The record gives the reactivity of an RNA of 177 nucleotides to 2A3 and DMS.
For DMS the reverse transcriptase was MarathonRT.
2A3 adducts were read by reverse transcription with SuperScript II with manganese.
RNA sequence: GGGAACGACUCGAGUAGAGUCGAAAACGGGCCAGCCGAUGGACACGACUCGCGAACUCCGCGUACGUCAGCGAAUCGGCGGUGUGCGACGCGAGGACGGGCACCUGGUUCGGACGGCCGCUGCCGACGACCCCAUACUGUUCGCAGUAUGGGGUCGAAAAGAAACAACAACAACAAC
Reactivity to 2A3 in 0.01 (KOAc 150mM, MgCl2 10mM, bicine 150mM(pH8.5), 24C), signal-to-noise 3, nucleotides 027 to 126: c020g000g060g030c010c020a000g040c050c040g150a170u070g020g010a030c020a010c140g060a050c020u010c000g020c010g030a090a080c080u040c130c010g000c020g030u040a040c020g090u070c060a100g030c040g130a160a170u160c040g070g000c000g000g000u020g010u000g010c030g030a050c020g010c010g020a000g030g050a110c000g000g000g020c040a070c000c020u040g040g000u050u030c000g020g030a030c000g020g010c030c040g130c100u130g010c010c020g060a110
Reactivity to DMS in 0.01 (KOAc 150mM, MgCl2 10mM, bicine 150mM(pH8.5), 24C), signal-to-noise 3, nucleotides 027 to 126: c060g010g000g020c010c010a100g010c060c040g000a100u020g000g010a280c000a100c020g010a300c000u000c010g010c000g000a190a070c080u020c090c020g030c020g000u000a060c030g000u000c050a170g020c110g040a190a070u000c210g000g010c020g000g020u010g000u000g000c030g000a130c030g000c040g000a110g000g010a110c010g030g000g020c030a070c090c010u000g000g010u010u000c060g000g010a120c050g000g000c070c060g000c060u020g000c040c030g010a160